[RMDB]
RNA sequence: GGGAACGACUCGAGUAGAGUCGAAAACACGGUCUCUCGACGAUCGCAGCGGACCUCUACGAUAUCCUCGGAAUCGACGUCGUCCGGGAGAUCUCGAUUCCGCACUUCAACCGCGAUUACUGGGGUCGCGAGGAACGAGUCCGCGGCCUGUUGAAGAGAUAGGAUAUCGUUUCGACGAUAUCCUAUCAAAAGAAACAACAACAACAAC
Reactivity to 2A3 in 0.01 (KOAc 150mM, MgCl2 10mM, bicine 150mM(pH8.5), 24C), signal-to-noise 6, nucleotides 027 to 156: c120a030c050g020g010u000c000u000c000u000c040g070a060c040g020a070u090c070g020c100a040g050c020g030g010a060c020c070u040c060u100a110c050g060a090u060a080u200c020c040u030c040g020g020a050a040u060c040g060a080c040g090u050c010g030u040c090c070g030g020g000a070g010a010u000c020u020c060g020a020u050u000c010c010g020c060a040c040u080u080c040a050a070c050c020g030c030g100a070u060u140a150c050u160g050g000g020g000u010c010g020c060g050a120g020g050a120a070c090g020a030g040u000c010c000g000c010g010g000c000c030u010g010u010u020g010a050a030g070a010
Reactivity to DMS in 0.01 (KOAc 150mM, MgCl2 10mM, bicine 150mM(pH8.5), 24C), signal-to-noise 1, nucleotides 027 to 156: c080a060c070g030g040u020c020u000c050u000c010g000a070c050g000a030u000c020g050c020a130g000c030g050g000a050c060c040u010c040u000a110c080g000a090u010a080u000c060c020u000c070g010g000a120a080u000c030g040a080c090g030u000c040g010u000c030c070g000g020g020a100g010a010u000c080u000c010g000a210u000u000c010c010g000c050a170c050u000u000c030a060a050c030c000g040c000g000a090u000u000a150c070u000g000g000g010g000u000c000g000c000g020a110g000g010a080a080c080g020a190g000u000c030c060g020c010g020g020c020c050u000g010u000u000g000a080a080g000a180
Record summary
An RNA of 207 nucleotides, treated with 2A3 and DMS and read out base by base. For 2A3, 5,951 sequencing reads were counted. DMS adducts were read by reverse transcription with MarathonRT.